[RMDB]
RNA sequence: GGGAACGACUCGAGUAGAGUCGAAAAGACAUGACGUUCGCGUCAUGUCAAAUAAAUAAAAGAUCGUACCUAGCGACGAUCAAAAGCUAGCAAAAAUAAAAAAAACCAUCUGGUUCGCCAGAUGGAACUAAAACACAUUGUUCGCAAUGUGUUUUAGAAAAGAAACAACAACAACAAC
Reactivity to 2A3 in 0.01 (KOAc 150mM, MgCl2 10mM, bicine 150mM(pH8.5), 24C), signal-to-noise 3, nucleotides 027 to 126: g000a000c000a000u010g000a000c040g010u040u040c220g020c000g070u010c000a000u000g000u010c000a010a000a000u010a000a010a000u180a030a040a010a030g050a040u050c020g000u030a090c010c090u050a060g010c070g150a020c010g030a020u080c030a000a060a000a030g070c060u110a000g080c100a040a090a070a150a140u220a120a100a050a030a010a010a010a040c010c000a010u010c000u000g000g040u040u040c180g020c050c000a000g000a010u000g010g000a000a000
Reactivity to DMS in 0.01 (KOAc 150mM, MgCl2 10mM, bicine 150mM(pH8.5), 24C), signal-to-noise 2, nucleotides 027 to 126: g000a010c000a000u000g000a000c000g030u000u000c170g010c040g020u000c010a000u000g020u000c000a000a080a040u000a090a040a070u020a110a080a140a190g000a040u000c000g030u000a070c030c080u010a110g010c060g000a010c000g000a030u010c050a020a020a100a040g010c160u010a040g040c300a010a040a090a060a080u020a030a050a020a070a050a050a130a160c000c000a010u000c000u000g000g000u000u010c190g010c010c010a010g000a020u000g000g000a010a030

This 177-nucleotide RNA was probed chemically with 2A3 and DMS. For 2A3, 4,967 sequencing reads were counted. The DMS profile rests on 1,900 reads. The data come from the RNA Mapping Database (RMDB), library M2PK50.